[RMDB]
RNA sequence: GGGAACGACUCGAGUAGAGUCGAAAAAGGGUGUGUGGUCAGAAGUGCUUUCAUCUGGCAGGCUGGAGAUCCAAGCCCAACUUGGCCACUCACCAGAUGGUUUGUAACUUGGGCAGAUUAUCGAGCAUGUAAUUAGCAAUUUCGAUUGCUAAUUACAAAAAGAAACAACAACAACAAC
Reactivity to 2A3 in 0.01 (KOAc 150mM, MgCl2 10mM, bicine 150mM(pH8.5), 24C), signal-to-noise 5, nucleotides 027 to 126: a000g150g010g000u010g000u010g000u000g010g000u010c010a010g030a170a050g110u040g070c020u050u100u130c060a160u040c060u050g050g030c020a050g060g040c030u050g030g000a100g010a040u060c040c010a030a010g000c010c000c000a000a040c020u050u060g000g000c000c010a000c010u010c000a000c000c000a000g000a020u030g010g040u040u070u020g060u050a120a100c050u070u070g060g080g000c000a000g000a040u030u030a040u100c050g000a020g060c070a060
Reactivity to DMS in 0.01 (KOAc 150mM, MgCl2 10mM, bicine 150mM(pH8.5), 24C), signal-to-noise 9, nucleotides 027 to 126: a110g010g010g020u000g010u000g020u000g010g020u000c010a060g010a100a220g010u000g000c030u000u000u000c100a060u010c060u000g000g010c060a090g010g010c090u000g010g000a100g000a060u010c040c060a040a060g000c030c040c060a060a140c080u010u010g010g000c000c000a010c020u000c010a030c020c010a060g010a050u000g010g010u000u000u000g010u010a060a090c150u000u010g010g000g010c020a040g010a050u000u000a050u010c050g010a120g010c200a150

An RNA of 177 nucleotides, treated with 2A3 and DMS and read out base by base.
Values cover nucleotides 27 to 126.
Conditions: 150 mM KOAc, 10 mM MgCl2 and 150 mM bicine (pH 8.5), 24 C.
2A3 adducts were read by reverse transcription with SuperScript II with manganese.